[RMDB]
RNA sequence: GGGAACGACUCGAGUAGAGUCGAAAAAUAUAAACAGACGCAAAUCAAAACAUCAAAAGGAAGAGUUAGCAAUUGACUUGAUUUGUUGUUACUCAUCGUAAGGACUUGAAAUGGAUAAACGUUGGACAUAAGACUAGAUAAUUAAUGAACUAAGAAAAAAUUACGCCUCAUUCGUGAGGCGUAAUUUAAAAGAAACAACAACAACAAC
Reactivity to 2A3 in 0.01 (KOAc 150mM, MgCl2 10mM, bicine 150mM(pH8.5), 24C), signal-to-noise 1, nucleotides 027 to 156: a000u070a010u070a010a090a010c060a020g020a030c040g000c040a040a000a120u050c020a040a040a060a080c020a060u100c000a000a090a140a000g140g000a030a020g010a000g030u040u070a030g030c080a170a020u110u100g030a020c050u030u040g000a000u090u010u000g020u070u030g010u000u040a020c010u000c010a060u010c020g000u020a050a000g070g030a050c030u030u080g060a030a000a030u110g010g000a050u050a020a100a000c010g000u050u160g010g020a010c010a010u100a110a000g070a000c040u090a020g020a070u060a240a030u300u020a050a110u130g010a070a060c030u080a140a000g050a100a030a060
Reactivity to DMS in 0.01 (KOAc 150mM, MgCl2 10mM, bicine 150mM(pH8.5), 24C), signal-to-noise 1, nucleotides 027 to 156: a100u010a020u010a050a020a210c070a150g060a050c060g010c040a060a060a070u000c060a060a030a090a130c040a050u000c060a040a010a110a060g000g040a060a100g210a120g010u020u000a020g000c050a050a100u000u000g040a110c060u000u010g000a120u010u000u000g020u010u010g040u000u000a090c070u000c060a170u010c130g020u000a080a090g040g010a070c000u010u000g000a030a080a110u000g000g010a050u000a120a090a070c040g010u030u010g040g000a110c060a060u000a110a130g040a010c050u010a050g000a070u000a100a120u000u010a030a090u000g010a010a200c010u000a050a110g030a000a000a230